[RMDB]
RNA sequence: GGGAACGACUCGAGUAGAGUCGAAAAGGGGUCUAAGGAAAUCUUGGAUUUAAGUAGCUUUUGACGGACUGAAGCCUCCACGGUCCGAUAAGCUACUUUGUCAGAUUUCCAUUAGACGGAGGCACCCAAAAGGGUAGGAACUUCGGUUCCUACCCAACGAUUACUAAAUGUUCGCAUUUAGUAAUCGAAAAGAAACAACAACAACAAC
Reactivity to 2A3 in 0.01 (KOAc 150mM, MgCl2 10mM, bicine 150mM(pH8.5), 24C), signal-to-noise 5, nucleotides 027 to 156: g050g000g030g010u010c010u010a010a010g010g010a010a020a010u030c050u200u300g130g020a110u300u300u110a040a010g000u000a000g000c020u100u090u080u280g180a120c080g000g000a000c000u030g050a090a010g050c020c020u040c040c010a040c030g000g010u020c000c000g010a050u060a090a020g000c010u000a000c050u030u010u030g040u020c020a010g000a000u000u000u000c010c000a020u000u010a000g000a010c010g000g010a000g010g000c000a050c000c010c040a010a120a040a080g000g010g010u000a000g000g020a000a000c010u070u070c240g040g000u000u000c000c000u000a010c000c000c000a000a000
Reactivity to DMS in 0.01 (KOAc 150mM, MgCl2 10mM, bicine 150mM(pH8.5), 24C), signal-to-noise 2, nucleotides 027 to 156: g000g010g010g030u010c000u000a010a090g000g000a030a020a010u000c000u000u000g060g010a110u000u010u000a000a030g030u000a030g010c000u000u000u040u020g020a250c090g000g040a050c030u010g050a040a190g020c030c020u000c000c020a300c060g020g000u000c010c000g030a090u000a020a040g020c000u000a000c020u000u010u010g020u010c030a060g010a040u000u010u010c000c000a140u010u000a040g000a090c020g010g030a050g030g030c050a120c010c010c020a050a080a120a150g030g010g070u010a010g010g000a040a020c010u000u010c300g000g000u020u000c010c000u000a000c000c000c010a000a010